An RNA of 177 nucleotides, treated with 2A3 and DMS and read out base by base. For DMS the reverse transcriptase was MarathonRT. The data come from the RNA Mapping Database (RMDB), library M2PK50. The RNA was probed in 150 mM KOAc, 10 mM MgCl2 and 150 mM bicine (pH 8.5) at 24 C. The 2A3 profile rests on 1,927 reads.
[RMDB]
RNA sequence: GGGAACGACUCGAGUAGAGUCGAAAAUACCGCGUCUUCGGACGCGGUAAGAUCCCGUCGGAAAACCUGAGAGACGGAGAUGAAGAGAGUCAAGCUACGCAAUGACUGCCGGAUUCGUCCGGCAGAAUGUGCGUAAGAUAUUCGUAUCUUACGCACAAAAAGAAACAACAACAACAAC
Reactivity to 2A3 in 0.01 (KOAc 150mM, MgCl2 10mM, bicine 150mM(pH8.5), 24C), signal-to-noise 2, nucleotides 027 to 126: u080a000c010c000g020c000g030u000c010u030u110c220g100g000a010c000g050c020g040g000u000a000a010g000a010u030c010c010c000g000u030c020g080g120a070a050a120a180c010c010u100g040a030g000a000g040a100c040g050g000a150g000a040u070g070a060a060g060a030g000a000g070u040c050a040a000g010c040u120a040c060g010c090a050a100u170g060a120c000u010g000c010c000g010g010a010u060u010c170g010u030c050c000g000g000c010a000g010a000a010
Reactivity to DMS in 0.01 (KOAc 150mM, MgCl2 10mM, bicine 150mM(pH8.5), 24C), signal-to-noise 4, nucleotides 027 to 126: u000a010c010c000g020c020g010u000c000u000u020c220g010g000a010c000g040c010g000g030u010a010a020g000a110u000c010c000c000g010u000c070g010g010a140a050a060a090c040c040u000g020a170g000a140g010a050c060g000g010a060g000a050u000g000a080a090g000a100g000a060g010u000c030a080a110g000c070u010a050c120g000c100a080a080u000g020a240c000u000g000c000c000g000g010a050u000u010c220g000u000c000c000g000g010c000a000g000a040a080